Chemical mapping of a 177-nucleotide RNA with DMS and 2A3.
The data come from the RNA Mapping Database (RMDB), library TTRDEL.
2A3 adducts were read by reverse transcription with SuperScript II with manganese.
For DMS the reverse transcriptase was MarathonRT.
RNA sequence: GGGAACGACUCGAGUAGAGUCGAAAAGAUAUGGAGUCUCGCCCUCAGAGUGGUUCGGAAACGAAUACCACGACGAAGAGGGAAACGACUCCUAAGUCAAACAACAUGUUGUUCGCAACAUGUUGAACUUUACGAUAACGUUCGCGUUAUCGUAAAGAAAAGAAACAACAACAACAAC
Reactivity to DMS in 0.01 (KOAc 150mM, MgCl2 10mM, bicine 150mM(pH8.5), 24C), signal-to-noise 6, nucleotides 027 to 126: g010a070u000a300u000g000g000a010g000u000c010u010c300g000c000c000c010u000c000a060g010a120g010u000g000g010u000u000c000g000g000a090a100a160c000g000a020a050u010a080c000c000a010c010g000a170c240g000a090a060g000a020g000g000g000a010a030a060c220g000a020c000u000c000c000u000a000a080g000u000c010a110a110a250c010a000a000c010a000u000g000u000u000g000u000u010c210g010c000a010a000c010a010u000g010u000u000g000a050a130
Reactivity to 2A3 in 0.01 (KOAc 150mM, MgCl2 10mM, bicine 150mM(pH8.5), 24C), signal-to-noise 4, nucleotides 027 to 126: g040a030u080a050u140g010g000a010g010u000c030u040c110g140c000c010c000u000c000a030g020a010g040u010g000g020u020u010c020g000g030a080a060a050c010g010a020a030u170a250c010c000a030c020g150a110c030g020a080a090g000a010g010g030g000a060a100a020c150g000a000c010u000c000c000u000a070a030g010u010c040a080a050a150c010a000a000c000a000u000g000u010u010g030u090u080c300g000c130a000a000c000a010u000g010u000u000g000a010a010